[RMDB]
An RNA of 177 nucleotides, treated with DMS and 2A3 and read out base by base. Conditions: 150 mM KOAc, 10 mM MgCl2 and 150 mM bicine (pH 8.5), 24 C. It was measured as part of the RMDB libraries RFM100 and RFMREP. 2A3 adducts were read by reverse transcription with SuperScript II with manganese.

RNA sequence: GGGAACGACUCGAGUAGAGUCGAAAAAGCUCGUAUUACGAUACGAGCAAUGGGAUGAUGAGUUCAGCCUUGUCCGAGCUGUGACGAGGGAGUGACGGACUGACCAGCAUCCACUACGGUGGAUGCAAUGGAUAAGGUACUUCGGUACCUUAUCCAUAAAAGAAACAACAACAACAAC
Reactivity to DMS in 0.01 (KOAc 150mM, MgCl2 10mM, bicine 150mM(pH8.5), 24C), signal-to-noise 6, nucleotides 027 to 126: a110g000c000u000c000g010u000a010u000u020a130c180g020a070u010a000c000g010a010g000c000a030a020u020g010g000g000a140u020g010a070u020g000a130g010u010u000c030a140g010c030c010u010u000g000u000c000c030g020a300g030c170u000g010u020g020a050c090g010a040g000g000g000a120g010u030g020a090c060g000g010a040c040u010g000a120c060c060a110g000c000a010u000c000c000a010c000u000a110c180g020g010u000g010g000a010u000g010c000a020
Reactivity to 2A3 in 0.01 (KOAc 150mM, MgCl2 10mM, bicine 150mM(pH8.5), 24C), signal-to-noise 7, nucleotides 027 to 126: a000g010c010u000c000g000u000a010u010u060a080c290g040a010u000a000c000g000a000g000c010a000a060u030g010g000g030a050u100g010a050u050g040a080g080u080u040c030a040g070c010c010u030u040g030u000c020c020g060a080g070c110u100g080u240g110a050c050g020a040g010g010g010a070g070u110g060a050c050g000g020a010c020u030g030a050c010c030a000g010c000a000u000c000c010a000c000u020a020c180g120g000u000g010g010a000u000g000c000a000